Source information:
An RNA of 207 nucleotides, treated with 2A3 and read out base by base. The 2A3 profile rests on 468 reads. The RNA was probed in 150 mM KOAc, 10 mM MgCl2 and 150 mM bicine (pH 8.5) at 24 C. 2A3 adducts were read by reverse transcription with SuperScript II with manganese. It was measured as part of the RMDB library OK3TST.

RNA sequence: GGGAACGACUCGAGUAGAGUCGAAAAGCAUGUGGCCUUAUCACAUGAUGGAGCAUCUUUUGGGUAUAUGCCCAAGAGUGGUCUAGCUGGGUUCUCUGGUAGUACUAUGUGCAACUUUCUGAGGAACUGCCAGACUGAUUUCCAAAACCUCCAAGUAGCAUCGCUACUCGUUCGCGAGUAGCGAUGCAAAAGAAACAACAACAACAAC
Reactivity to 2A3 in 0.01 (KOAc 150mM, MgCl2 10mM, bicine 150mM(pH8.5), 24C), signal-to-noise 1, nucleotides 027 to 156: g020c000a000u040g000u020g020g080c100c220u300u290a150u260c000a000c020a000u000g010a080u070g030g000a000g060c000a020u190c060u010u000u000u010g050g050g010u050a210u060a100u300g010c020c000c010a010a030g010a000g000u010g040g060u040c070u060a090g010c050u040g190g000g060u040u040c040u000c010u010g030g000u020a020g000u010a000c020u150a130u250g000u050g110c090a110a040c080u090u240u160c110u240g000a010g070g000a050a040c000u020g000c010c000a000g000a010c000u050g010a070u090u050u020c000c000a000a030a000a000c000c020u010c000c000a070a040g090u120a140